The record gives the reactivity of an RNA of 177 nucleotides to DMS and 2A3.
For DMS the reverse transcriptase was MarathonRT.
The 2A3 profile rests on 123,718 reads.
The reactions ran in a buffer of 150 mM KOAc, 10 mM MgCl2 and 150 mM bicine (pH 8.5), at 24 C.
RNA sequence: GGGAACGACUCGAGUAGAGUCGAAAAACUAGUAUGUACAGGGGUGAGUUGACCUGUCAUCUAGACUGCUGACCAUCAACUCACCGGUCAGCUGGAUGAUGUCUACAGAGUACGACAUCAGUACUCAGUGUAAGGAUGGGUUCGCCUAUCUUUACACAAAAGAAACAACAACAACAAC
Reactivity to DMS in 0.01 (KOAc 150mM, MgCl2 10mM, bicine 150mM(pH8.5), 24C), signal-to-noise 9, nucleotides 027 to 126: a220c000u000a010g000u060a010u000g000u050a010c000a010g000g010g000g010u020g010a080g010u000u000g010a080c020c010u000g000u000c000a000u000c010u000a010g000a170c050u000g000c010u000g000a010c010c040a180u020c120a050a030c100u010c080a080c150c130g000g000u000c000a010g010c000u010g000g000a100u010g000a020u000g000u000c010u000a090c080a190g010a140g010u000a030c110g000a040c040a020u010c020a060g010u020a050c040u010c050a200
Reactivity to 2A3 in 0.01 (KOAc 150mM, MgCl2 10mM, bicine 150mM(pH8.5), 24C), signal-to-noise 9, nucleotides 027 to 126: a000c010u010a010g050u110a060u060g060u090a010c000a010g030g030g020g060u140g100a120g050u050u060g090a070c000c010u000g000u000c000a000u000c000u010a020g060a120c040u040g000c000u000g000a000c000c010a040u120c050a050a080c050u040c090a060c030c050g000g000u000c000a000g000c010u010g030g020a050u040g000a010u010g020u000c010u000a030c040a060g120a020g080u030a020c060g020a010c010a030u020c010a010g030u050a050c030u030c090a020